[RMDB]
RNA sequence: GGGAACGACUCGAGUAGAGUCGAAAAGAAUCACCGUACCUAUUUAGGUUUACGAUCCAAGAUCGGUGGAUAGCAGCCCUAUCAAUAUCUAGGAGAACUGUGCUAUGUUUAGAAGAUUAGGUAGUCUAUUACACAGCCAUGUUCGCAUGGCUGUGAACUGACACAUACAGUUCGCUGUAUGUGUCAGAAAAGAAACAACAACAACAAC
Reactivity to DMS in 0.01 (KOAc 150mM, MgCl2 10mM, bicine 150mM(pH8.5), 24C), signal-to-noise 2, nucleotides 027 to 156: g010a130a090u000c030a240c030c010g020u000a050c020c010u010a130u000u010u000a010g010g010u000u000u010a020c070g000a060u000c020c050a070a100g030a060u000c050g020g020u010g000g000a090u000a080g000c060a100g020c090c000c030u010a140u000c050a070a160u000a070u010c090u000a110g000g000a130g010a080a060c020u010g040u010g030c050u000a040u010g010u000u000u000a110g020a050a140g020a130u000u000a090g000g010u010a070g020u000c030u000a110u000u000a190c020a020c000a000g010c000c010a020u000g010u000u010c260g020c000a030u000g010g030c000u010g010u000g000a030a130
Reactivity to 2A3 in 0.01 (KOAc 150mM, MgCl2 10mM, bicine 150mM(pH8.5), 24C), signal-to-noise 3, nucleotides 027 to 156: g070a020a050u150c000a020c040c020g020u060a040c000c010u070a190u160u170u240a040g000g000u020u050u090a080c040g020a000u030c050c040a060a000g040a060u070c020g010g020u020g020g010a020u020a060g030c080a030g000c000c020c010u030a050u080c070a160a080u070a040u210c060u050a010g030g040a080g060a080a110c050u040g020u020g090c010u030a010u100g060u010u090u020a110g010a130a040g000a120u110u070a030g050g000u010a010g050u010c030u010a110u070u170a090c000a000c000a000g010c000c000a010u010g000u010u060c070g010c070a000u000g000g000c000u000g010u000g000a010a010
The data come from the RNA Mapping Database (RMDB), library M2RFPK.
Chemical mapping of a 207-nucleotide RNA with DMS and 2A3.
Values cover nucleotides 27 to 156.
2A3 adducts were read by reverse transcription with SuperScript II with manganese.
The 2A3 profile rests on 2,319 reads.
For DMS the reverse transcriptase was MarathonRT.